[RMDB]
RNA sequence: GGGAACGACUCGAGUAGAGUCGAAAAGCAUUUCUGCCCGUCCUCCACCAGGUGAACAGUUUAAACACUUAGUUCCCCUUAUGCAUAAGGGAGCUGCGUGGCCUAUUGUUAGACGACGUAUAGUUCAACUUGGUCACACUUUCGAGUGUGACCAAGUAAAAGAAACAACAACAACAAC
Reactivity to 2A3 in 0.01 (KOAc 150mM, MgCl2 10mM, bicine 150mM(pH8.5), 24C), signal-to-noise 1, nucleotides 027 to 126: g020c000a130u050u070u160c050u060g020c040c030c020g010u030c020c010u000c020c000a100c040c010a020g090g000u020g070a010a030c040a030g000u000u040u140a170a230a010c010a000c000u030u110a010g000u060u000c060c000c000c000u050u180a070u180g180c080a090u040a160a000g030g030g000a000g000c040u040g030c060g030u000g000g010c000c000u110a090u150u140g090u090u050a030g010a120c120g020a010c080g080u130a030u150a160g050u030u060c040a040
Reactivity to DMS in 0.01 (KOAc 150mM, MgCl2 10mM, bicine 150mM(pH8.5), 24C), signal-to-noise 1, nucleotides 027 to 126: g000c070a060u000u020u000c060u010g000c000c040c010g000u010c040c010u010c030c020a090c070c060a080g000g040u010g010a040a010c050a110g000u020u000u010a090a100a090c100a020c010u000u000a050g010u000u000c050c020c000c060u000u000a050u010g050c220a110u000a080a060g010g020g010a020g000c020u000g000c060g000u000g020g000c060c010u000a080u000u000g010u000u000a070g010a010c070g010a030c080g010u020a080u010a100g010u000u000c040a070